The record gives the reactivity of an RNA of 177 nucleotides to 2A3 and DMS. The RNA was probed in 150 mM KOAc, 10 mM MgCl2 and 150 mM bicine (pH 8.5) at 24 C. DMS adducts were read by reverse transcription with MarathonRT. High DMS reactivity at an A or C suggests that its Watson-Crick edge is free. The 2A3 profile rests on 414 reads. The data come from the RNA Mapping Database (RMDB), library OK1LIB.
RNA sequence: GGGAACGACUCGAGUAGAGUCGAAAAUAGCUCAGUUGGUAGAGCAGUUGACUUUUAAUCAAUUGGUCGCAGGUUCGAAUCCUGCACGACCCACCAAUCGCUAAGGUGGAAGCGGUAGUAAAACGUGAUGGAUAUGCGGGUUCGCCCGCAUAUCCAUAAAAGAAACAACAACAACAAC
Reactivity to 2A3 in 0.01 (KOAc 150mM, MgCl2 10mM, bicine 150mM(pH8.5), 24C), signal-to-noise 1, nucleotides 027 to 126: u110a000g020c020u020c050a120g000u000u150g070g110u300a050g000a050g150c080a070g050u000u030g180a300c040u000u020u070u300a080a080u040c080a040a030u000u000g110g000u000c000g020c000a000g000g000u000u070c000g000a000a120u000c000c000u000g000c000a000c000g030a080c010c010c000a000c000c000a000a300u060c040g050c100u160a020a100g060g000u010g040g000a000a000g110c050g030g000u080a050g000u020a170a000a200a140c120g040u120g110
Reactivity to DMS in 0.01 (KOAc 150mM, MgCl2 10mM, bicine 150mM(pH8.5), 24C), signal-to-noise 1, nucleotides 027 to 126: u000a120g050c000u000c000a120g010u070u030g000g000u110a010g000a040g000c000a080g000u000u000g000a070c040u000u090u000u000a040a240u000c070a000a010u000u000g040g000u000c060g070c000a000g000g010u000u000c000g000a300a080u030c000c000u000g040c100a190c140g000a090c050c020c000a070c000c000a000a110u000c230g000c300u000a080a020g000g000u000g010g000a110a040g000c030g000g080u000a040g010u150a060a140a200a110c200g000u080g000